[RMDB]
This 207-nucleotide RNA was probed chemically with 2A3. Values cover nucleotides 27 to 156. The RNA was probed in 150 mM KOAc, 10 mM MgCl2 and 150 mM bicine (pH 8.5) at 24 C.

RNA sequence: GGGAACGACUCGAGUAGAGUCGAAAAGUAUAGCGAAGUUGGAGGCGACGAGCUAUACGAUGAAUCAGCCUCGAUUGAUAUCGGUAUACAGAUCAGCGGCGAUCAGAUACCGUAAUUAGUAGCCGCCAUCCGGAGUGGAGACGCACGACGGUCGUCAACCAGCAUCGAUAUUCGUAUCGAUGCUGGUAAAAGAAACAACAACAACAAC
Reactivity to 2A3 in 0.01 (KOAc 150mM, MgCl2 10mM, bicine 150mM(pH8.5), 24C), signal-to-noise 2, nucleotides 027 to 156: g000u000a000u000a000g000c010g130a190a010g020u090u140g130g030a020g010g000c000g000a010c000g050a030g030c000u000a000u000a000c070g030a070u080g090a050a110u160c060a030g050c000c000u010c030g170a220u030u140g030a030u050a110u200c000g000g010u000a000u000a120c140a100g000a000u000c000a020g030c010g010g000c010g010a030u030c000a020g000a070u000a030c000c000g010u030a030a100u160u150a040g120u030a000g030c000c000g050c000c000a080u000c000c050g000g000a000g000u010g000g070a210g040a080c060g090c030a030c000g070a010c000g080g000u080c150g040u020c040a010